[RMDB]
RNA sequence: GGGAACGACUCGAGUAGAGUCGAAAAGAGGGCAUCAUGACAGCCCCCGUGGCUGAGAAGUCGGUGUCAUGGGCUGGCGAGUUAUGCUCGUACAGCGUCAUCGAUGGAAAGCAUUGCGACGUCGGGAAGGAAGAGGCACCCGUCGACGAUAAGGAGCGGUGUUACAGACGUUCGCGUCUGUAACACCAAAAGAAACAACAACAACAAC
Reactivity to 2A3 in 0.01 (KOAc 150mM, MgCl2 10mM, bicine 150mM(pH8.5), 24C), signal-to-noise 2, nucleotides 027 to 156: g220a030g010g010g030c040a040u080c040a080u250g060a070c070a020g020c000c000c000c000c060g080u130g030g000c010u000g060a020g040a200a030g020u010c000g000g030u000g050u090c120a140u170g020g160g030c010u010g010g000c040g010a020g000u080u220a200u300g030c010u000c030g000u090a210c010a000g010c020g000u000c000a030u040c010g010a020u040g000g010a070a010a000g030c040a060u060u170g060c030g010a040c000g000u040c010g010g010g020a110a040g160g020a060a000g030a040g140g000c050a040c010c010c000g010u040c010g000a030c010g000a090u100a150a090g100g010a070g060c060
Background:
Structure probing data (2A3) for a 207-nucleotide construct. Source: RMDB library OK3TST, as collected in RNAgym. For 2A3, 1,059 sequencing reads were counted.